[RMDB]
Structure probing data (2A3 and DMS) for a 207-nucleotide construct. Conditions: 150 mM KOAc, 10 mM MgCl2 and 150 mM bicine (pH 8.5), 24 C. For 2A3 the reverse transcriptase was SuperScript II with manganese.
RNA sequence: GGGAACGACUCGAGUAGAGUCGAAAAUCACAGGAGACCACACAGGCGGCCCGUCCCCUUGGAGAGUUGGACUUUUGAAAAUAAGCCACGUCUGCCGUGACCGGUGUUACGAUAAUCUCACAGGUGGCCUGCUGGCCGUGGCAGAGUCCUGGAGCUCCAUGCGAAUAGGAUUCGUCCUAUUCGCAUGAAAAGAAACAACAACAACAAC
Reactivity to 2A3 in 0.01 (KOAc 150mM, MgCl2 10mM, bicine 150mM(pH8.5), 24C), signal-to-noise 2, nucleotides 027 to 156: u050c020a020c060a050g040g000a060g080a110c000c000a010c010a000c020a050g090g030c050g000g050c030c020c010g010u000c010c000c000c010u040u060g060g000a050g000a040g060u120u100g010g060a130c030u110u090u120u190g100a080a060a050a030u180a110a010g000c000c000a010c000g010u000c020u050g020c020c000g060u080g110a060c070c030g000g020u080g040u070u020a010c000g010a050u060a230a170u080c010u020c030a080c010a040g000g060u020g020g070c020c040u030g010c010u040g010g040c020c020g000u000g010g030c050a010g020a020g050u010c000c010u000g040g010a030g030c000u010c010
Reactivity to DMS in 0.01 (KOAc 150mM, MgCl2 10mM, bicine 150mM(pH8.5), 24C), signal-to-noise 2, nucleotides 027 to 156: u010c050a100c070a120g030g020a120g000a060c010c020a100c040a080c080a090g020g040c100g020g000c010c030c050g030u000c030c000c000c040u020u000g000g000a080g010a110g010u050u020g030g020a060c050u000u000u010u010g000a100a110a120a170u000a110a100g000c000c020a020c020g000u000c060u000g050c030c100g050u000g000a060c010c030g020g000u000g000u000u000a040c060g010a170u010a090a130u000c030u000c030a060c030a040g010g000u010g010g010c030c030u010g020c030u000g030g000c000c040g040u000g010g010c000a060g010a080g020u000c020c000u010g020g010a150g000c050u000c010